[RMDB]
RNA sequence: GGGAACGACUCGAGUAGAGUCGAAAAAAAAUGGAAAAAGUGAUCUGGACAAUGAGAGCCCUGUUAGCCUGACCUCCCUGGCACAUGGACUCAGAGCACGUUCAGAGAGGGAGAUAGUACAGAAACGCUAACACGAGUAAUUCGUUACUCGUGUUAGAAAAGAAACAACAACAACAAC
Reactivity to 2A3 in 0.01 (KOAc 150mM, MgCl2 10mM, bicine 150mM(pH8.5), 24C), signal-to-noise 2, nucleotides 027 to 126: a000a010a000a050u140g000g010a120a110a020a030a040g100u060g070a040u040c000u040g010g020a010c020a080a090u120g040a090g000a030g180c000c010c010u010g030u060u060a050g000c030c020u030g030a090c030c020u010c010c000c000u000g000g010c030a010c020a050u110g030g000a030c000u000c040a030g030a010g060c060a010c080g000u040u000c010a010g010a010g000a010g010g030g000a010g030a050u120a040g080u060a030c040a040g100a080a060a000c050g020
Reactivity to DMS in 0.01 (KOAc 150mM, MgCl2 10mM, bicine 150mM(pH8.5), 24C), signal-to-noise 5, nucleotides 027 to 126: a050a050a070a080u040g000g000a090a070a050a090a070g030u010g010a120u000c020u010g010g010a020c040a090a080u000g010a180g010a020g010c020c010c000u000g020u010u000a120g010c020c010u000g000a130c080c040u000c020c010c000u000g000g020c040a090c060a030u000g020g000a040c030u000c040a130g010a160g010c080a040c140g000u000u000c020a040g000a030g000a070g010g010g000a040g020a070u000a060g010u000a060c090a070g010a090a060a100c290g010
An RNA of 177 nucleotides, treated with 2A3 and DMS and read out base by base. For DMS, 4,342 sequencing reads were counted. Source: RMDB library OK2TST, as collected in RNAgym. For DMS the reverse transcriptase was MarathonRT. Conditions: 150 mM KOAc, 10 mM MgCl2 and 150 mM bicine (pH 8.5), 24 C.